An RNA of 207 nucleotides, treated with 2A3 and DMS and read out base by base.
For DMS, 4,841 sequencing reads were counted.
For 2A3 the reverse transcriptase was SuperScript II with manganese.
Conditions: 150 mM KOAc, 10 mM MgCl2 and 150 mM bicine (pH 8.5), 24 C.
[RMDB]
RNA sequence: GGGAACGACUCGAGUAGAGUCGAAAAACGUCACAGUACUGUGGUCCAGAGAAGCACAUCGCACUGGAGGUGAUUUCCAUCACCUGUGGCUCCAUGUACUUCUCUGUUCCACAGUACUGGAAACGAAAAAACCACGAUUAUCUUCGGAUAAUCGUGGCCGUAAAGAAAGGUUCGCCUUUCUUUACGGAAAAGAAACAACAACAACAAC
Reactivity to 2A3 in 0.01 (KOAc 150mM, MgCl2 10mM, bicine 150mM(pH8.5), 24C), signal-to-noise 8, nucleotides 027 to 156: a000c020g020u020c020a010c000a070g000u000a000c000u000g000u010g000g010u010c010c000a000g000a000g000a000a000g010c020a000c000a010u030c030g010c020a040c060u070g080g100a020g010g010u010g010a040u190u160u120c110c100a010u010c000a010c000c000u160g110u040g300g010c020u000c020c010a000u000g000u000a020c000u000u000c000u000c000u000g000u000u000c000c000a000c000a000g000u000a000c000u000g000g000a010a000a000c010g090a130a000a000a010a000a010c000c000a000c000g000a000u000u000a000u000c010u020u060c210g080g000a000u000a000a000u000c000g000u000g010g000
Reactivity to DMS in 0.01 (KOAc 150mM, MgCl2 10mM, bicine 150mM(pH8.5), 24C), signal-to-noise 2, nucleotides 027 to 156: a100c040g010u000c050a300c000a030g000u010a010c020u000g040u010g010g030u000c140c010a030g030a020g010a030a040g020c010a000c010a060u000c070g010c100a080c000u000g030g020a040g000g030u000g000a040u000u000u000c300c150a160u000c010a010c000c000u000g000u010g000g020c050u000c020c030a040u000g030u020a020c010u000u000c000u080c010u000g020u000u000c010c000a020c050a010g010u000a000c000u000g020g000a070a090a080c020g020a000a040a100a080a110a240c010c000a010c000g010a010u000u000a000u010c000u000u000c300g010g000a030u000a000a040u000c000g030u000g000g010